An RNA of 177 nucleotides, treated with 2A3 and read out base by base. Values are in units of 0.01, from 0 to 300, in steps of 10. High 2A3 reactivity points to a flexible backbone, as in loops and unpaired stretches. It was measured as part of the RMDB library RFM100. The RNA was probed in 150 mM KOAc, 10 mM MgCl2 and 150 mM bicine (pH 8.5) at 24 C.
[RMDB]
RNA sequence: GGGAACGACUCGAGUAGAGUCGAAAACCGGGCUUCCGGGGCAUCACCCGGUCGGCGCGGUCGCGGCGCGCCGAGGGCCCGACGCCUGGCGGAGAAUCAGGGUUCGACUCCGGAGAGCGGGCCUGCGAAAGUAUUUAAUUUUCGAAUUAAAUACUUUAAAAGAAACAACAACAACAAC
Reactivity to 2A3 in 0.01 (KOAc 150mM, MgCl2 10mM, bicine 150mM(pH8.5), 24C), signal-to-noise 4, nucleotides 027 to 126: c030c000g000g040g010c020u140u060c010c010g030g000g020g000c040a130u110c040a130c000c000c000g010g020u010c000g000g000c010g000c010g030g020u080c050g020c050g140g030c010g000c000g000c000c000g000a020g000g030g000c010c060c030g010a020c030g020c000c000u050g070g060c020g050g120a090g030a130a110u080c030a040g030g030g020u010u040c010g010a010c000u000c000c020g010g050a110g000a010g060c000g000g010g010c000c000u010g000c030g050